Source: RMDB library M2RFPK, as collected in RNAgym. Chemical mapping of a 207-nucleotide RNA with DMS and 2A3. The RNA was probed in 150 mM KOAc, 10 mM MgCl2 and 150 mM bicine (pH 8.5) at 24 C. For DMS, 2,921 sequencing reads were counted. For DMS the reverse transcriptase was MarathonRT. 2A3 adducts were read by reverse transcription with SuperScript II with manganese.

RNA sequence: GGGAACGACUCGAGUAGAGUCGAAAAGACGCCUUUAGAAGAAGAGGCUAGGGGGCAUUCCGGUGUGGGAUACUUAGUAAUAUGCAACGCUAAUUGCAUAAGAUUGUAGGACGGAAUUUACAGUCUUUAGAGAUAAGCACGUUCGCGUGCUUAUCAAACUUAACCUUCAGUUCGCUGAAGGUUAAGUAAAAGAAACAACAACAACAAC
Reactivity to DMS in 0.01 (KOAc 150mM, MgCl2 10mM, bicine 150mM(pH8.5), 24C), signal-to-noise 2, nucleotides 027 to 156: g040a090c110g040c050c000u000u000u000a080g020a220a200g020a190a100g000a020g000g000c000u000a070g000g000g010g040g000c030a220u000u010c010c080g030g030u020g000u000g000g000g000a080u000a110c080u000u000a110g000u000a050a160u000a040u000g000c000a020a090c050g000c200u000a110a160u000u000g010c000a020u000a050a060g000a130u000u000g020u000a030g000g020a120c040g010g000a100a280u000u000u010a030c030a120g010u000c020u000u000u000a100g000a160g010a030u000a000a000g010c000a010c000g020u000u000c300g050c030g040u000g010c000u000u000a000u000c010a020a040
Reactivity to 2A3 in 0.01 (KOAc 150mM, MgCl2 10mM, bicine 150mM(pH8.5), 24C), signal-to-noise 4, nucleotides 027 to 156: g050a020c050g030c010c010u090u060u070a170g030a220a010g020a040a010g010a040g030g000c030u040a080g020g000g000g000g020c000a030u060u040c030c020g060g000u160g040u100g080g010g000a050u060a120c020u050u070a050g040u080a050a080u020a040u090g010c010a020a000c040g010c160u100a100a100u090u010g000c010a010u020a060a030g020a040u030u090g040u060a030g000g050a030c030g010g040a030a020u060u030u080a050c030a030g020u000c000u050u080u060a110g020a000g000a050u000a010a000g000c010a010c000g000u030u070c170g030c000g090u000g000c000u000u010a000u000c000a010a000